The data come from the RNA Mapping Database (RMDB), library RNAMAK.
This 207-nucleotide RNA was probed chemically with 2A3 and DMS.
For 2A3, 2,603 sequencing reads were counted.
The RNA was probed in 150 mM KOAc, 10 mM MgCl2 and 150 mM bicine (pH 8.5) at 24 C.

[RMDB]
RNA sequence: GGGAACGACUCGAGUAGAGUCGAAAAAUAGUGUUCGCACUAUGGUUUUCCUAAGUCUCCCGAUGAAAGCCUUUGGGCGAUAAGUAUCGGAAACGAUACUUUUGACGCCUUUCGAAAGGCUGGAGGGAGAUAUGGAUCAGUCCGAGUUCGCUCGGAAGGUACCUUUAAAAUUCGUUUUAAAGGUACCAAAAGAAACAACAACAACAAC
Reactivity to 2A3 in 0.01 (KOAc 150mM, MgCl2 10mM, bicine 150mM(pH8.5), 24C), signal-to-noise 1, nucleotides 027 to 156: a010u020a010g000u010g040u100u080c230g060c090a000c000u020a040u030g080g000u010u080u060u060c020c000u040a150a000g010u000c000u000c000c020c010g110a190u040g010a010a000a000g000c000c000u040u020u030g000g000g000c020g000a020u030a040a000g000u000a000u020c020g050g050a100a000a010c000g000a000u000a010c000u010u030u020u060g080a060c010g000c010c000u030u100u120c150g080a040a000a000g000g000c010u000g000g010a000g000g000g000a000g000a000u000a010u020g020g020a060u120c080a050g160u050c050c000g010a010g000u070u180c180g050c090u000c000g010g000a000a010
Reactivity to DMS in 0.01 (KOAc 150mM, MgCl2 10mM, bicine 150mM(pH8.5), 24C), signal-to-noise 3, nucleotides 027 to 156: a050u000a010g010u010g000u000u000c300g050c020a020c000u000a020u000g020g000u010u000u000u000c000c000u000a070a200g020u010c010u000c010c010c000g010a170u000g010a270a210a110g010c000c010u010u000u010g020g010g020c010g010a110u000a020a020g000u000a010u000c000g010g010a140a130a260c010g020a010u000a010c000u000u000u000u000g000a270c080g020c000c000u000u000u000c160g010a070a030a020g020g020c000u000g000g000a130g010g010g000a020g010a000u000a000u000g010g000a150u000c080a230g010u000c000c000g010a060g030u000u010c280g040c050u000c000g020g000a030a030